[RMDB]
RNA sequence: GGGAACGACUCGAGUAGAGUCGAAAAGAUAUGGACUAUCACCAUGGGCGAAGAACUAAUUCGGAAACGAAUUAGGGAGCCUUGGUAUAGUCCUAAGUCAAAAUCGUAGGUCUUCGGACCUACGAAAGAACCUAAUUUCGUUCGCGAAAUUAGGUUCAAAAGAAACAACAACAACAAC
Reactivity to 2A3 in 0.01 (KOAc 150mM, MgCl2 10mM, bicine 150mM(pH8.5), 24C), signal-to-noise 1, nucleotides 027 to 126: g040a020u050a080u100g010g000a000c010u010a000u040c110a030c050c010a230u290g180g000g000c090g290a300a010g000a000a100c010u000a020a010u000u010c000g020g000a050a050a040c000g010a020a040u020u010a000g040g000g000a010g030c020c000u000u010g000g010u020a000u000a040g010u000c000c010u000a010a000g040u010c000a040a020a010a300u000c010g000u000a000g040g000u010c020u020u010c300g100g000a020c000c010u000a000c000g000a000a000a020
Reactivity to DMS in 0.01 (KOAc 150mM, MgCl2 10mM, bicine 150mM(pH8.5), 24C), signal-to-noise 1, nucleotides 027 to 126: g050a030u020a300u000g000g000a010c000u000a000u000c220a000c030c010a020u010g010g000g000c040g000a090a230g010a110a200c000u010a000a000u000u010c000g020g020a080a080a240c010g000a010a000u000u000a000g000g000g000a040g060c020c010u000u020g000g020u010a010u000a010g010u000c000c000u000a040a070g000u000c090a170a080a150a140u000c000g010u000a000g010g010u000c000u000u050c300g040g000a010c000c010u010a000c000g000a000a050a080